[RMDB]
RNA sequence: GGGAACGACUCGAGUAGAGUCGAAAAGGGAAUGGUGGUUUACCCCGUUAUCAAAUGAUUACCGACCAAUAAUUGGCGAAACUCGUUUCGCGUUGGCUGCCUAAUUCAAGGAACUAGCGUGCCUUCAAAGACAUCAAGAAGUUCGCUUCUUGAUGAAGGCAAUUGUAUUGUUCGCAAUACAAUUGCCAAAAGAAACAACAACAACAAC
Reactivity to DMS in 0.01 (KOAc 150mM, MgCl2 10mM, bicine 150mM(pH8.5), 24C), signal-to-noise 2, nucleotides 027 to 156: g010g020g000a050a080u000g010g030u000g000g030u000u000u010a130c020c020c000c020g020u000u010a100u000c090a050a130a060u000g010a160u000u000a060c050c030g000a120c000c000a070a150u000a080a200u000u000g000g050c000g000a100a080a080c060u000c090g030u000u000u000c020g060c040g030u000u030g010g010c030u000g010c060c030u000a080a120u020u000c120a050a120g000g000a050a030c030u000a110g010c120g030u000g020c000c010u020u010c050a040a080a150g000a210c060a020u000c000a030a030g010a030a020g080u000u020c290g000c010u000u000c010u000u000g010a020u000g020a010a070
Reactivity to 2A3 in 0.01 (KOAc 150mM, MgCl2 10mM, bicine 150mM(pH8.5), 24C), signal-to-noise 4, nucleotides 027 to 156: g030g000g020a090a060u100g030g060u020g020g010u050u070u260a160c020c020c010c000g080u140u070a100u110c070a040a090a080u120g010a040u050u030a040c000c040g080a090c040c080a030a080u160a080a060u060u080g030g000c010g010a030a060a060c070u060c080g040u030u030u040c010g000c010g010u010u010g010g010c020u100g080c030c020u090a110a100u190u120c050a060a030g040g000a020a020c020u010a030g030c020g040u020g010c000c000u020u030c030a040a040a050g070a030c000a000u000c000a000a000g000a000a000g030u020u110c190g020c100u000u000c000u000u000g000a000u000g010a020a020
Notes: Structure probing data (DMS and 2A3) for a 207-nucleotide construct. Source: RMDB library M2RFPK, as collected in RNAgym. For 2A3 the reverse transcriptase was SuperScript II with manganese. As a SHAPE reagent, 2A3 marks flexible, mostly unpaired nucleotides at the ribose 2'-OH. Reactivities are rounded to 0.1 and cut off at 0 and 3.